[RMDB]
RNA sequence: GGGAACGACUCGAGUAGAGUCGAAAACGCCGGUGUCUGGACACCCGCAGUACGUCGCAGCUUCGAUCCCGUAUCGGGUGCCUCUCAAGCCUGCCGCGCCUGGAUUACUGCGGUUCAGUUCUUGUCCCUACAAAGUAUACUUCGGUAUACUUUGUAGAAAAGAAACAACAACAACAAC
Reactivity to 2A3 in 0.01 (KOAc 150mM, MgCl2 10mM, bicine 150mM(pH8.5), 24C), signal-to-noise 3, nucleotides 027 to 126: c060g040c040c030g070g040u070g030u020c080u090g040g000a020c010a040c030c030c000g000c020a000g030u040a020c030g020u030c030g030c050a030g020c030u110u120c060g090a110u070c000c000c030g040u130a150u210c030g020g000g030u030g030c000c010u080c000u000c040a040a050g010c010c020u020g030c030c020g030c000g030c020c030u090g030g010a040u100u070a070c020u030g010c010g030g000u050u070c030a050g010u040u000c020u060u090g050u050c010c000
Reactivity to DMS in 0.01 (KOAc 150mM, MgCl2 10mM, bicine 150mM(pH8.5), 24C), signal-to-noise 6, nucleotides 027 to 126: c150g020c060c060g010g010u000g010u010c040u010g000g000a070c060a070c160c030c020g010c060a030g020u000a030c090g010u000c240g010c030a060g000c070u000u010c110g000a090u000c020c020c040g010u010a090u010c080g000g000g000u010g000c060c040u000c070u010c080a080a110g020c120c050u000g020c030c060g020c030g010c090c040u000g010g000a090u010u000a030c040u000g010c020g000g000u000u000c100a080g000u000u000c040u000u000g000u010c120c060